[RMDB]
Notes
Structure probing data (DMS) for a 177-nucleotide construct. Reactivities are given for positions 27 through 126. The data come from the RNA Mapping Database (RMDB), library OK2TST.
RNA sequence: GGGAACGACUCGAGUAGAGUCGAAAAUAGCUGGCGCUUCACUCGCGCCUCCAACAUGGCUUCCAGUUCAUAAGAGGUGUCGAAAUGGUUUUCUACCGCAUUCUUGGAUGAAUGGGUUAUCAAAAUGUACGCAUUUUGUCUUCGGACAAAAUGCGUAAAAAGAAACAACAACAACAAC
Reactivity to DMS in 0.01 (KOAc 150mM, MgCl2 10mM, bicine 150mM(pH8.5), 24C), signal-to-noise 1, nucleotides 027 to 126: u010a100g040c030u010g020g010c030g050c050u010u000c200a070c090u010c220g000c070g010c040c000u010c020c070a060a150c180a090u020g000g000c110u000u010c040c080a080g000u000u000c060a010u010a070a130g000a070g010g000u000g020u000c070g010a020a070a060u000g000g020u000u000u000u020c030u010a040c040c040g010c000a000u000u000c030u000u000g020g000a060u000g020a040a020u000g020g030g000u000u010a070u010c120a080a060a110a120u010g030